RNA sequence: GGGAACGACUCGAGUAGAGUCGAAAAUGACGGGGUCGAUGCGUCACCAUGCGGUAACGAAACGGGCGUUGCUGAGUGGGGAGAGGCACAUUCCACUGAGACAUCGUGGGAGCUGCUGAUGUCCAUCAAUCAGGUCAUCCUUCGGGAUGACCUGAUUAAAAGAAACAACAACAACAAC
Reactivity to DMS in 0.01 (KOAc 150mM, MgCl2 10mM, bicine 150mM(pH8.5), 24C), signal-to-noise 1, nucleotides 027 to 126: u000g000a050c070g000g000g010g000u000c070g000a080u040g000c000g000u000c000a120c020c030a050u000g000c060g000g000u040a060a080c040g040a160a130a070c130g010g000g000c110g000u000u000g070c020u040g000a040g000u000g000g030g000g000a010g000a190g000g070c020a180c080a260u030u020c000c030a010c010u020g000a120g000a220c210a070u020c030g020u060g000g000g000a130g000c190u010g000c000u000g020a230u000g000u030c080c010a060u010c060
Reactivity to 2A3 in 0.01 (KOAc 150mM, MgCl2 10mM, bicine 150mM(pH8.5), 24C), signal-to-noise 2, nucleotides 027 to 126: u120g030a000c000g010g000g040g000u060c000g030a000u180g030c000g070u040c020a030c000c010a020u170g020c060g020g000u020a030a040c040g020a210a000a000c030g050g040g010c040g040u010u010g000c030u010g000a030g020u010g000g010g050g050a070g000a020g030g000c000a000c000a090u080u000c010c000a010c070u110g050a060g030a160c100a080u130c120g030u030g000g030g020a060g010c010u020g000c010u060g000a030u040g070u000c000c030a040u130c040
This 177-nucleotide RNA was probed chemically with DMS and 2A3. The RNA was probed in 150 mM KOAc, 10 mM MgCl2 and 150 mM bicine (pH 8.5) at 24 C. Source: RMDB library OK1LIB, as collected in RNAgym. The 2A3 profile rests on 1,215 reads. For DMS the reverse transcriptase was MarathonRT.